[RMDB]
RNA sequence: GGGAACGACUCGAGUAGAGUCGAAAACUAUAAGAGGAACCGACUUACUAGAGUUGAAGCUUCUACCGUUGUCUGUGGUGGAAAACGUACGUUUUAUAUCACAGCAAAUGGCGGUAUUUCAUUCUGUCCAGCUGCGGGUUCGCCCGCAGCAAAAGAAACAACAACAACAAC
Reactivity to DMS in 0.01 (KOAc 150mM, MgCl2 10mM, bicine 150mM(pH8.5), 24C), signal-to-noise 3, nucleotides 027 to 129: c070u000a000u110a180a130g020a120g110g000a100a110c110c010g020a070c000u000u010a040c060u040a120g000a070g030u000u010g000a090a070g040c080u020u000c060u040a020c000c010g000u090u030g000u030c050u000g040u020g000g070u000g000g040a140a000a000a000c030g060u120a080c270g010u000u070u000u000a100u000a010u020c030a030c000a050g050c030a010a020a120u030g070g000c010g210g000u000a000u040u030u000c050a090u010u030c060u080g030u010c070c050a130
Reactivity to 2A3 in 0.01 (KOAc 150mM, MgCl2 10mM, bicine 150mM(pH8.5), 24C), signal-to-noise 3, nucleotides 027 to 129: c020u050a040u100a300a180g130a050g170g000a020a080c000c000g000a000c010u000u000a000c010u030a010g030a010g020u010u000g050a090a030g080c000u090u030c010u000a010c000c000g050u000u000g090u060c000u000g000u020g000g020u000g010g030a000a010a000a000c050g110u280a010c000g000u040u000u000u000a100u000a000u040c000a000c000a000g000c000a010a030a120u160g020g000c000g020g000u030a040u010u060u040c070a090u050u030c020u070g120u000c020c020a030